[RMDB]
RNA sequence: GGGAACGACUCGAGUAGAGUCGAAAAGAUUUACGGCGGGAAAGGUCACGGGCGCGCCGAGGUUCCGGGUGCGGCACCGACCGAAAGGCGCGGAAAUGCGUCACCGACCGAAACCGCCGGAAAGAAACCUAGCUGACGUAUUCGUACGUCAGCUAGGAAAAGAAACAACAACAACAAC
Reactivity to DMS in 0.01 (KOAc 150mM, MgCl2 10mM, bicine 150mM(pH8.5), 24C), signal-to-noise 1, nucleotides 027 to 126: g040a170u000u000u000a040c000g000g010c080g000g000g020a030a130a300g010g000u000c010a270c140g010g000g010c070g010c040g020c000c010g010a190g000g060u000u020c130c020g010g040g120u010g020c060g020g030c000a210c030c010g040a090c060c020g020a020a150a120g010g010c060g020c020g010g000a030a040a050u010g030c040g020u000c050a130c140c070g030a060c010c000g000a050a140a070c020c000g020c010c000g000g000a000a010a200g010a080a080a120